[RMDB]
Notes: Conditions: 150 mM KOAc, 10 mM MgCl2 and 150 mM bicine (pH 8.5), 24 C. Chemical mapping of a 207-nucleotide RNA with 2A3 and DMS. For DMS the reverse transcriptase was MarathonRT. The 2A3 profile rests on 1,799 reads.
RNA sequence: GGGAACGACUCGAGUAGAGUCGAAAACCUGGUUUAGGGUUCCAGGCUAGCCCUAUCUAUCGGUCGAGAUGCGAGCGCUUAAGCUCAAAUUGAGUGGCUGAGUUAGUGGUGAACGUAUCCCUAUGGUAAAACGGUAGCUGCUUCGGCAGCUACCGAAGUGAAAAGAGAAGUUCGCUUCUCUUUUCACAAAAGAAACAACAACAACAAC
Reactivity to 2A3 in 0.01 (KOAc 150mM, MgCl2 10mM, bicine 150mM(pH8.5), 24C), signal-to-noise 3, nucleotides 027 to 156: c000c000u000g020g040u060u080u120a040g000g020g010u030u050c010c010a010g040g000c020u020a020g000c020c000c000u010a040u020c020u040a090u030c010g020g000u010c030g030a020g000a170u000g000c010g000a020g000c060g030c160u250u280a130a060g000c010u000c010a020a040a010u010u030g010a040g030u250g040g000c010u000g010a000g020u000u040a050g000u120g200g010u050g020a080a020c030g030u070a070u120c000c000c000u030a120u120g110g080u110a070a110a010a020c010g000g010u000a000g000c000u010g000c010u020u030c080g080g000c010a000g000c000u000a000c000c000g000a000a000
Reactivity to DMS in 0.01 (KOAc 150mM, MgCl2 10mM, bicine 150mM(pH8.5), 24C), signal-to-noise 2, nucleotides 027 to 156: c010c010u020g000g010u000u000u000a100g000g000g020u000u010c000c010a050g010g010c010u000a300g050c010c000c010u030a040u010c040u000a050u000c010g050g000u000c030g000a300g040a050u020g010c300g010a040g090c010g050c280u000u000a120a150g020c010u000c000a000a290a070u000u000g020a190g070u000g020g000c030u000g000a070g010u000u000a030g010u000g040g040u000g000a120a090c060g000u010a120u000c000c000c000u000a150u000g000g010u000a040a070a060a200c010g010g030u000a010g000c000u000g000c000u000u010c280g070g000c000a000g000c000u000a000c000c000g000a000a040